[RMDB]
RNA sequence: GGGAACGACUCGAGUAGAGUCGAAAACUGCCGCCGGGACGCAGUGAUCCUCGCAGGGUCGCACGGUCGCCUCGGGUCGGCCUCGUGUCGGCACGACCUGCGAGGGGAGCGAGUGGCGAGCCCGACCAAAACUUUCUCGCCUUCGGGCGAGAAAGAACCUACAGUGUGGGUUCGCCCACACUGUAGGAAAAGAAACAACAACAACAAC
Reactivity to 2A3 in 0.01 (KOAc 150mM, MgCl2 10mM, bicine 150mM(pH8.5), 24C), signal-to-noise 1, nucleotides 027 to 156: c060u050g000c020c000g010c000c020g130g120g100a060c030g060c020a140g190u010g030a020u020c000c000u000c000g070c000a000g000g000g110u040c020g000c030a020c020g010g000u020c010g000c010c010u040c020g020g010g050u070c000g000g040c000c010u070c140g040u020g110u100c070g000g030c070a000c180g100a040c010c010u000g020c000g030a000g000g000g000g000a000g000c000g020a070g090u070g020g000c000g010a020g010c010c010c010g000a030c010c070a000a040a070a150c000u010u000u000c000u000c000g000c000c060u000u060c230g080g000g000c000g010a000g000a000a000a000g000a000a000
Record summary: Source: RMDB library M2RFPK, as collected in RNAgym. The record gives the reactivity of an RNA of 207 nucleotides to 2A3. Reactivities are given for positions 27 through 156. For 2A3, 697 sequencing reads were counted. 2A3 adducts were read by reverse transcription with SuperScript II with manganese. The RNA was probed in 150 mM KOAc, 10 mM MgCl2 and 150 mM bicine (pH 8.5) at 24 C.